[RMDB]
RNA sequence: GGGAACGACUCGAGUAGAGUCGAAAAGCUAGCUAGUAAGUGCUAGCAGCAAUCAGGUUUAAGGCAACGGGUAUGCAAGCUACUGAUAGGCCAAGCAAUAGGUCCAAUGUGAUGCACAUUCCCGAGCAUUUACAUACAUAUUCGUAUGUAUGUAAAUAAAAGAAACAACAACAACAAC
Reactivity to DMS in 0.01 (KOAc 150mM, MgCl2 10mM, bicine 150mM(pH8.5), 24C), signal-to-noise 9, nucleotides 027 to 126: g000c010u000a070g010c000u000a040g010u010a130a140g030u040g010c000u000a010g000c000a040g000c040a110a100u030c110a100g010g010u010u010u020a060a070g010g010c020a090a120c070g000g000g000u000a060u000g000c060a060a130g000c030u020a030c020u010g000a200u030a190g000g000c010c010a090a120g010c250a100a120u030a090g010g010u010c000c040a050a120u010g000u010g000a100u020g010c020a100c060a080u010u010c000c000c000g010a170g010c040
Reactivity to 2A3 in 0.01 (KOAc 150mM, MgCl2 10mM, bicine 150mM(pH8.5), 24C), signal-to-noise 9, nucleotides 027 to 126: g000c010u070a010g000c000u020a010g020u100a260a110g080u110g130c000u000a000g000c000a000g000c000a000a070u100c030a020g070g030u040u060u060a070a020g060g000c020a090a050c020g000g000g000u020a000u010g000c040a030a030g000c000u020a010c000u010g020a040u100a070g000g000c000c000a050a010g070c020a060a110u050a120g000g000u000c000c020a010a020u040g030u010g050a300u060g000c000a000c000a010u010u010c000c000c000g000a000g000c000